[RMDB]
RNA sequence: GGGAACGACUCGAGUAGAGUCGAAAAGGUGGCGUCCCCGACGCCUCAUGGGUCGGGAACGACUGAGACGGGCACCGGUCGUGUCCGGUGCCGCUCGUAUCCAUUUUGCUCCUUGGAGGAUUUGGCUAUAUAGCGUCAUAUUCGUAUGACGCUAUAUAAAAGAAACAACAACAACAAC
Reactivity to DMS in 0.01 (KOAc 150mM, MgCl2 10mM, bicine 150mM(pH8.5), 24C), signal-to-noise 6, nucleotides 027 to 126: g010g010u000g000g000c010g000u000c030c010c000c010g000a030c010g010c010c030u000c170a100u030g020g000g010u000c000g000g000g000a050a010c000g000a090c170u030g000a020g010a060c070g010g020g010c000a010c000c000g010g000u000c300g010u010g010u010c000c000g000g020u000g010c010c000g010c010u000c010g000u020a100u010c000c010a040u000u010u000u000g000c150u010c000c020u000u010g010g000a130g010g000a130u010u000u000g000g020c200u010
Reactivity to 2A3 in 0.01 (KOAc 150mM, MgCl2 10mM, bicine 150mM(pH8.5), 24C), signal-to-noise 5, nucleotides 027 to 126: g010g010u030g020g030c000g000u030c010c010c000c010g000a000c010g150c020c000u150c070a190u300g000g010g010u010c000g000g000g020a020a010c010g040a010c060u150g000a000g000a070c200g060g020g000c010a010c020c020g000g030u140c240g150u110g110u100c000c000g000g000u000g000c000c000g000c000u000c000g020u040a140u060c000c000a010u050u040u030u150g040c030u040c020c000u050u070g100g020a080g010g050a070u100u050u110g070g000c010u000